[RMDB]
RNA sequence: GGGAACGACUCGAGUAGAGUCGAAAACUUGGAUAAAACCUUUUUUCCGUCAGGGGCCGCUUGUUUUUUAAAACAAGUUUGGAGGGUUGGCCAAGCCUAUUCAAAGUGCGGAAUAUGAUGGGAAACCCUCUAAUGACUUGUUCGCAGGUCGUUAGAGAAAAGAAACAACAACAACAAC
Reactivity to 2A3 in 0.01 (KOAc 150mM, MgCl2 10mM, bicine 150mM(pH8.5), 24C), signal-to-noise 8, nucleotides 027 to 126: c010u030u050g040g010a060u200a190a170a100a130c030c040u120u080u020u010u020u020c000c000g010u020c010a020g020g010g170g010c000c000g000c010u000u000g050u020u010u010u010u040u160a050a110a000a000c010a010a020g000u000u010u030g000g010a010g000g000g000u040u030g060g030c020c000a020a010g010c000c000u170a300u020u040c020a030a030a030g090u110g080c010g000g040a000a020u110a020u050g030a010u010g010g000g000a010a010a010c010c000
Reactivity to DMS in 0.01 (KOAc 150mM, MgCl2 10mM, bicine 150mM(pH8.5), 24C), signal-to-noise 4, nucleotides 027 to 126: c070u010u010g000g010a080u010a070a080a130a150c010c010u000u010u010u010u010u000c010c020g010u000c060a040g030g020g010g030c050c060g010c010u000u010g000u000u000u010u050u050u030a040a060a020a000c010a000a020g000u010u010u010g000g000a020g000g000g010u010u010g000g000c040c050a040a070g010c020c010u000a030u010u010c020a040a050a070g010u020g000c070g000g010a030a010u010a040u010g000a050u000g000g000g000a080a040a030c090c020
Notes:
The record gives the reactivity of an RNA of 177 nucleotides to 2A3 and DMS. For DMS, 15,257 sequencing reads were counted. The 2A3 profile rests on 12,113 reads. Conditions: 150 mM KOAc, 10 mM MgCl2 and 150 mM bicine (pH 8.5), 24 C. It was measured as part of the RMDB library OK1LIB. Values are in units of 0.01, from 0 to 300, in steps of 10. DMS adducts were read by reverse transcription with MarathonRT.